[RMDB]
Overview:
An RNA of 177 nucleotides, treated with DMS and 2A3 and read out base by base. The data come from the RNA Mapping Database (RMDB), library RFMREP. The 2A3 profile rests on 1,342 reads. The DMS profile rests on 847 reads. The RNA was probed in 150 mM KOAc, 10 mM MgCl2 and 150 mM bicine (pH 8.5) at 24 C.
RNA sequence: GGGAACGACUCGAGUAGAGUCGAAAAGUCCUCUGAUGACUUCAUGUUAGUGCCACCUGUCUGGGCCACGGAGAACCCAUGAUGGAACUGAGAAUCUGAGGAAAAAAUCACUGAGUUCGCUCAGUGACGUAUCCCAAGUGUUCGCACUUGGGAUACGAAAAGAAACAACAACAACAAC
Reactivity to DMS in 0.01 (KOAc 150mM, MgCl2 10mM, bicine 150mM(pH8.5), 24C), signal-to-noise 1, nucleotides 027 to 126: g000u000c000c050u000c050u000g000a050u000g020a170c090u020u000c050a030u010g010u000u000a170g030u010g000c020c050a130c110c020u000g010u000c010u010g010g010g020c180c070a130c090g010g030a070g020a080a180c020c050c030a030u000g000a040u010g000g000a070a020c010u010g020a040g000a250a020u000c020u010g000a070g000g030a000a000a040a090a070a110u000c000a000c000u020g000a010g020u000u000c300g010c000u030c000a010g010u000g000a010
Reactivity to 2A3 in 0.01 (KOAc 150mM, MgCl2 10mM, bicine 150mM(pH8.5), 24C), signal-to-noise 1, nucleotides 027 to 126: g040u030c010c010u040c030u020g070a090u000g060a080c060u030u050c090a070u150g040u120u060a060g050u050g150c010c010a070c050c010u060g000u030c000u020g000g000g050c000c040a060c130g140g020a110g020a020a040c000c030c000a030u170g000a020u060g030g070a020a060c030u020g000a020g020a110a070u030c020u040g000a020g010g000a060a050a000a000a000a020u010c000a000c010u000g010a000g030u070u020c100g080c100u000c000a000g010u010g000a000